[RMDB]
RNA sequence: GGGAACGACUCGAGUAGAGUCGAAAAAAUUUAGAUUAUCCAGGUGUAGCGGUGAAAUUCGUAGAGAUCUGGUGGAUAAUGAACCGGUGGCGAAGGCGUAAGAUAACCGCUGAAAUGCUGAAGUGAAUCUACAGGUCUAAUUCGUUAGACCUGUAGAAAAAGAAACAACAACAACAAC
Reactivity to DMS in 0.01 (KOAc 150mM, MgCl2 10mM, bicine 150mM(pH8.5), 24C), signal-to-noise 4, nucleotides 027 to 126: a050a050u000u000u000a090g010a130u000u000a060u010c030c030a140g010g000u000g020u000a070g040c010g010g000u000g000a070a110a110u010u000c010g020u000a090g010a110g010a080u000c010u000g000g000u000g010g010a100u000a060a100u020g000a110a060c050c010g020g020u010g010g010c210g010a060a100g000g010c040g010u010a040a060g010a060u000a140a050c030c020g010c020u000g010a030a070a100u000g020c020u000g000a070a110g010u010g010a080a140

The record gives the reactivity of an RNA of 177 nucleotides to DMS.
DMS (dimethyl sulfate) methylates the pairing face of unpaired adenines and cytosines.
DMS adducts were read by reverse transcription with MarathonRT.
Source: RMDB library M2PK90, as collected in RNAgym.